The record gives the reactivity of an RNA of 207 nucleotides to 2A3. 2A3 adducts were read by reverse transcription with SuperScript II with manganese. Conditions: 150 mM KOAc, 10 mM MgCl2 and 150 mM bicine (pH 8.5), 24 C. The 2A3 profile rests on 528 reads. Reactivities are given for positions 27 through 156.
[RMDB]
RNA sequence: GGGAACGACUCGAGUAGAGUCGAAAAUUUUCAGCACUGAUUUAUGUUGACACGGGUCAUACACUUACAUCUGCUUUAUUAUUAUUUUUUCAUGAAACAAACAAAUGUACAAAUAGAAUGGCAUGCCUGAAAAGCUGUACAUGCAAUAAAAUCGGCCCGACAAGUAUCGUUUCGACGAUACUUGUCGAAAAGAAACAACAACAACAAC
Reactivity to 2A3 in 0.01 (KOAc 150mM, MgCl2 10mM, bicine 150mM(pH8.5), 24C), signal-to-noise 2, nucleotides 027 to 156: u070u010u010u060c010a000g030c000a000c080u050g110a140u100u090u030a140u110g020u000u030g040a050c010a020c100g040g040g140u030c050a070u080a100c000a010c030u030u030a000c000a040u090c000u060g070c000u090u120u060a100u070u150a070u020u040a240u170u170u080u070u020u050c000a030u080g050a130a090a050c070a060a110a000c070a070a120a020u040g000u140a030c010a000a170a000u090a060g100a040a000u060g080g000c020a030u080g020c000c020u030g040a120a060a000a090g020c000u010g000u030a050c000a000u040g010c030a080a080u100a090a100a020a060u060c010g040g000c030c010